[RMDB]
RNA sequence: GGGAACGACUCGAGUAGAGUCGAAAACGUCCCCGUCGUACCGAAUGGUAACAUAUCUCUCCAAAUAUCUGAGCUUGGGUAUACGGGGAAACCCAACCCCUUGGGAAGAUUGGGUAUAUGGCUAAAUUACAUCGAUUGUACUUCGGUACAAUCGAAAGACAUUCUACACGUUCGCGUGUAGAAUGUCAAAAGAAACAACAACAACAAC
Reactivity to 2A3 in 0.01 (KOAc 150mM, MgCl2 10mM, bicine 150mM(pH8.5), 24C), signal-to-noise 2, nucleotides 027 to 156: c040g080u010c000c000c000c000g110u090c020g000u020a010c000c010g120a130a080u150g020g040u120a130a000c020a010u040a050u010c040u010c030u060c100c040a100a150a060u120a140u050c060u030g030a000g030c000u030u060g020g000g030u020a020u000a010c030g000g000g000g000a000a000a030c000c000c000a010a020c000c020c000c010u010u060g020g000g020a020a030g020a050u040u030g020g020g000u030a040u010a030u090g080g000c050u100a080a080a180u300u150a060c050a060u060c020g020a020u000u000g010u020a010c020u010u040c220g060g000u000a000c000a000a000u000c000g010a010a000a000
Annotation:
This 207-nucleotide RNA was probed chemically with 2A3. The data come from the RNA Mapping Database (RMDB), library M2RFPK. The RNA was probed in 150 mM KOAc, 10 mM MgCl2 and 150 mM bicine (pH 8.5) at 24 C. Reactivities are rounded to 0.1 and cut off at 0 and 3. The 2A3 profile rests on 1,140 reads.